The data come from the RNA Mapping Database (RMDB), library RFMREP. An RNA of 177 nucleotides, treated with 2A3 and DMS and read out base by base. The 2A3 profile rests on 6,296 reads. 2A3 adducts were read by reverse transcription with SuperScript II with manganese. Reactivities are given for positions 27 through 126.
RNA sequence: GGGAACGACUCGAGUAGAGUCGAAAACGCCAGUUCGCUGGCGAAAAGUUGUAGCCUUUCAAACAGAGCUCUGCAUGUACACACCUGUAUUGGAACACUACAGCUCCAAAAUCGCCGUUCGCGGCGAGAGUUAACAUUGGUUCGCCAAUGUUAACUCAAAAGAAACAACAACAACAAC
Reactivity to 2A3 in 0.01 (KOAc 150mM, MgCl2 10mM, bicine 150mM(pH8.5), 24C), signal-to-noise 5, nucleotides 027 to 126: c000g000c000c000a000g000u040u060c180g020c090u010g010g000c030g010a040a040a000a010g010u020u010g000u010a020g000c020c040u000u020u030c030a030a030a000c010a020g050a060g100c030u040c070u230g040c090a170u210g120u300a050c070a000c000a030c060c000u020g010u070a300u040u040g000g010a020a010c010a010c040u020a000c010a010g000c000u040c020c000a080a110a020a200u030c000g000c000c010g030u070u100c240g000c010g080g010c000g000a010
Reactivity to DMS in 0.01 (KOAc 150mM, MgCl2 10mM, bicine 150mM(pH8.5), 24C), signal-to-noise 3, nucleotides 027 to 126: c010g010c010c000a020g010u000u010c210g030c010u000g010g010c000g000a020a040a040a060g000u010u000g010u000a050g000c030c220u000u010u000c010a020a030a070c030a020g000a120g000c050u000c070u000g020c100a090u010g030u000a090c030a030c090a080c050c010u010g010u000a180u000u000g000g010a020a010c130a040c020u000a050c030a020g020c000u000c030c040a040a040a110a270u000c000g010c000c000g010u010u010c210g020c000g020g000c000g010a010